[RMDB]
RNA sequence: GGGAACGACUCGAGUAGAGUCGAAAAUGAUAUAAUCUGCAUCCGACAACGAUCACCAACUUCCACCUUGAUCGAUUGGUCGCAUAAUCCAUUAAAUUUGGAAGUAGUCGCUCAUGCUUAAAAGUACCGGAGGGUAUCAGUUCGCUGAUACCCUCCGAAAAGAAACAACAACAACAAC
Reactivity to DMS in 0.01 (KOAc 150mM, MgCl2 10mM, bicine 150mM(pH8.5), 24C), signal-to-noise 2, nucleotides 027 to 126: u030g000a130u010a040u070a080a040u000c070u000g020c030a090u020c140c030g000a100c050a060a200c120g000a010u000c060a050c140c050a180a110c010u010u000c010c030a070c300c030u010u000g000a000u010c270g030a050u010u000g020g050u000c090g050c110a070u050a030a020u000c000c030a000u000u020a000a000a020u070u010u030g010g000a030a070g000u010a090g000u000c000g000c030u070c040a000u000g010c080u000u000a000a060a030a000g010u010a150c100
Reactivity to 2A3 in 0.01 (KOAc 150mM, MgCl2 10mM, bicine 150mM(pH8.5), 24C), signal-to-noise 3, nucleotides 027 to 126: u120g030a020u040a020u020a100a180u030c020u080g010c040a010u020c060c030g080a020c020a120a010c010g060a040u060c030a030c090c050a110a070c040u020u000c000c020a050c000c060u040u090g000a000u020c010g020a050u030u080g120g000u080c000g000c050a060u130a160a020u000c000c030a010u180u180a100a090a050u070u020u010g010g020a000a020g030u080a000g040u040c050g040c020u020c060a020u040g050c020u030u080a040a020a030a040g050u040a100c030